[RMDB]
RNA sequence: GGGAACGACUCGAGUAGAGUCGAAAAGGACCGCUUCGGGCGCACACAGACGUUCCACCGCGAAGCCGCCGGUGAAUUCAGCGGCGAAAUCACCGGCGUGACGGAUGGUGCCGGGCGUCACUUCCGGCGUGAACCAUCUCUUCGGAGAUGGUUCACGAAAAGAAACAACAACAACAAC
Reactivity to DMS in 0.01 (KOAc 150mM, MgCl2 10mM, bicine 150mM(pH8.5), 24C), signal-to-noise 1, nucleotides 027 to 126: g000g000a090c240c060g000c040u030u000c040g060g020g010c120g040c050a120c070a200c170a120g000a130c020g030u000u000c030c000a050c000c050g000c070g010a170a240g020c040c020g000c000c000g010g000u000g010a030a060u000u000c000a080g000c080g000g070c080g000a010a040a030u010c020a030c010c030g020g030c070g000u000g000a080c010g000g020a160u030g010g020u000g000c020c110g000g000g000c060g010u000c060a050c150u000u000c010c020g030g010
This 177-nucleotide RNA was probed chemically with DMS. Source: RMDB library OK2TRN, as collected in RNAgym. DMS adducts were read by reverse transcription with MarathonRT. Conditions: 150 mM KOAc, 10 mM MgCl2 and 150 mM bicine (pH 8.5), 24 C. Values cover nucleotides 27 to 126.